[RMDB]
RNA sequence: GGGAACGACUCGAGUAGAGUCGAAAAAGACAUACGUUCGCGUAUGUCUGACGGGCACCUGACCGUAAGGAAAUGCUCUAUGACAGGACACACUGAUUGUGAUACCUCGAGAUUUCGAUCUCGAGAAGACGCAGGCAACUUUCGAGUUGCCUGCGUCAAAAGAAACAACAACAACAAC
Reactivity to 2A3 in 0.01 (KOAc 150mM, MgCl2 10mM, bicine 150mM(pH8.5), 24C), signal-to-noise 1, nucleotides 027 to 126: a000g000a000c000a000u000a020c010g000u000u050c280g000c010g050u000a010u030g010u000c000u000g020a010c020g000g000g000c020a080c090c030u060g050a110c020c070g010u080a040a090g080g030a010a130a090u060g030c000u000c040u020a130u140g150a100c050a020g030g050a060c000a000c000a010c030u120g170a300u210u030g040u020g080a120u100a180c000c030u000c000g010a020g000a000u020u060u090c170g040a010u010c000u000c030g010a010g020a010a020
Reactivity to DMS in 0.01 (KOAc 150mM, MgCl2 10mM, bicine 150mM(pH8.5), 24C), signal-to-noise 2, nucleotides 027 to 126: a010g030a060c020a000u010a020c010g030u000u040c240g020c020g030u000a000u000g000u000c000u000g010a050c130g020g000g000c060a130c140c040u000g000a220c050c040g000u020a110a080g010g020a060a090a120u000g010c040u000c020u000a060u020g000a110c080a070g000g000a110c110a030c120a050c080u000g010a160u000u010g020u010g010a140u000a100c170c000u000c010g000a020g010a030u000u000u040c170g020a010u000c010u000c000g000a020g010a140a060